[RMDB]
RNA sequence: GGGAACGACUCGAGUAGAGUCGAAAAGAUAUGGAAUGACUAGAAGCGAUAAGCGUAGGGUCGGAAACGACCUCACGCUUUUGACGCUUCGGUCAUUCCUAAGUCAAAGAGAUCCUUCGGGAUCUCAGUAAUCCACAACGUUCGCGUUGUGGAUUACAAAAGAAACAACAACAACAAC
Reactivity to DMS in 0.01 (KOAc 150mM, MgCl2 10mM, bicine 150mM(pH8.5), 24C), signal-to-noise 3, nucleotides 027 to 126: g010a070u000a300u010g020g000a030a000u000g010a010c010u000a170g040a030a010g010c010g010a200u010a030a010g010c000g070u010a040g000g010g010u000c000g010g000a060a070a210c020g010a010c000c000u000c080a000c010g000c020u000u000u000u000g020a230c080g010c000u000u000c000g020g010u000c000a010u010u000c000c000u000a000a060g000u000c040a090a110a120g010a030g000a000u000c000c000u000u010c260g010g010g000a000u000c000u000c000a040
Reactivity to 2A3 in 0.01 (KOAc 150mM, MgCl2 10mM, bicine 150mM(pH8.5), 24C), signal-to-noise 2, nucleotides 027 to 126: g010a030u080a010u080g000g000a000a010u020g000a010c040u140a300g010a020a000g000c060g080a070u050a220a000g020c010g030u010a060g000g030g020u010c010g040g000a020a050a020c000g010a000c010c010u020c000a010c010g030c000u030u010u020u050g110a100c100g010c000u010u000c000g000g000u000c000a010u010u000c010c000u000a020a000g010u000c040a050a130a030g020a000g000a000u010c020c000u020u010c080g110g000g000a000u000c000u000c000a000
This 177-nucleotide RNA was probed chemically with DMS and 2A3. It was measured as part of the RMDB library TTRDES. Conditions: 150 mM KOAc, 10 mM MgCl2 and 150 mM bicine (pH 8.5), 24 C.